[RMDB]
RNA sequence: GGGAACGACUCGAGUAGAGUCGAAAAUGUGUUCAUUUUAUGGAUUUUCGUGUUGUACGAUUUUUUUCAGUUGCGUUAGCAACUACGUGCCCACAAUACUUCCGAUGCAUUUAGAUAAUUUUUGGAACACGAUCAGCCGUUUCGACGGCUGAUCGUGAAAAGAAACAACAACAACAAC
Reactivity to 2A3 in 0.01 (KOAc 150mM, MgCl2 10mM, bicine 150mM(pH8.5), 24C), signal-to-noise 1, nucleotides 027 to 126: u000g000u000g080u120u160c080a050u140u130u070u180a190u230g000g000a000u030u030u030u030c140g030u050g000u260u280g030u000a010c040g000a090u080u080u000u000u000u240u000c050a000g000u000u000g000c000g040u160u300a090g000c000a000a000c000u000a000c000g000u000g000c000c000c050a010c060a020a020u150a040c030u010u030c000c000g010a080u000g000c000a000u000u140u140a040g000a010u130a160a260u130u090u000u000u050g010g000a000a000